[RMDB]
Record summary: An RNA of 177 nucleotides, treated with DMS and 2A3 and read out base by base. The reactions ran in a buffer of 150 mM KOAc, 10 mM MgCl2 and 150 mM bicine (pH 8.5), at 24 C.
RNA sequence: GGGAACGACUCGAGUAGAGUCGAAAAGGGACGUCCUUCGGGACGUCCCAAAGAAAACGCGUGCCAAAGCCGGCCAUAGAAGGCACGCGAAAGGCCGGCAAAAAACUUCGAACUUCGGUUCGAAGAAUCAAAGUAGUAACUUCGGUUACUACUUUGAAAAAGAAACAACAACAACAAC
Reactivity to DMS in 0.01 (KOAc 150mM, MgCl2 10mM, bicine 150mM(pH8.5), 24C), signal-to-noise 2, nucleotides 027 to 126: g040g020g000a020c030g020u000c010c000u000u020c180g000g030g020a000c000g010u010c000c000c000a000a020a150g000a130a120a140a190c090g000c000g000u000g000c000c010a130a080a210g000c000c030g030g010c000c020a180u000a110g000a080a080g000g000c000a000c000g010c000g020a020a070a130g030g010c010c010g010g000c030a000a040a060a070a070a070c000u000u000c010g000a020a010c000u000u000c160g000g000u000u000c000g000a010a000g010a150a080
Reactivity to 2A3 in 0.01 (KOAc 150mM, MgCl2 10mM, bicine 150mM(pH8.5), 24C), signal-to-noise 1, nucleotides 027 to 126: g000g010g040a000c000g030u080c110c140u150u190c300g120g000g000a000c010g000u020c000c000c000a000a020a000g000a000a070a000a010c030g020c000g000u010g020c000c000a200a080a020g010c000c000g000g010c020c000a110u120a100g120a040a110g030g000c020a010c000g000c000g010a000a000a000g020g010c010c060g000g020c020a070a000a020a000a000a030c010u030u020c000g000a000a010c010u050u030c250g040g000u010u010c010g000a000a000g010a000a040
For DMS, 1,924 sequencing reads were counted.